The record gives the reactivity of an RNA of 177 nucleotides to DMS and 2A3.
The reactions ran in a buffer of 150 mM KOAc, 10 mM MgCl2 and 150 mM bicine (pH 8.5), at 24 C.
Reactivities are given for positions 27 through 126.
2A3 adducts were read by reverse transcription with SuperScript II with manganese.

RNA sequence: GGGAACGACUCGAGUAGAGUCGAAAAGAGAUAAAUUAUUAUGCCUUACGCCUGGUUGACCAGACUUUAGAGGUCGCUGUUCUGAGCUUAACGUCUGUUUUAACUGAAACGCCGCAUUCUACACUACUACUGUGACGUACUUCGGUACGUCACAGUAAAAAGAAACAACAACAACAAC
Reactivity to DMS in 0.01 (KOAc 150mM, MgCl2 10mM, bicine 150mM(pH8.5), 24C), signal-to-noise 2, nucleotides 027 to 126: g000a090g000a090u010a010a050a070u010u030a110u040u030a040u010g010c000c020u000u020a100c210g010c040c000u000g000g040u000u000g010a110c150c070a070g000a080c050u000u010u030a230g000a120g030g010u000c060g010c030u030g000u000u020c050u020g000a070g010c000u000u010a080a030c090g020u000c040u000g010u010u030u020u010a020a070c060u000g000a090a080a060c150g000c040c070g010c080a050u060u000c080u000a110c110a090c130u010a120c210
Reactivity to 2A3 in 0.01 (KOAc 150mM, MgCl2 10mM, bicine 150mM(pH8.5), 24C), signal-to-noise 2, nucleotides 027 to 126: g100a000g020a100u180a070a230a010u190u300a080u140u090a050u050g080c000c000u010u090a010c010g010c010c000u000g060g010u040u090g040a050c010c000a020g000a040c040u110u040u160a110g010a030g090g010u020c000g000c000u000g040u060u060c020u020g090a040g040c000u010u050a000a130c020g010u000c000u000g040u050u060u000u070a050a030c020u060g050a080a040a000c000g020c040c000g060c000a000u070u000c000u060a040c020a030c020u090a000c000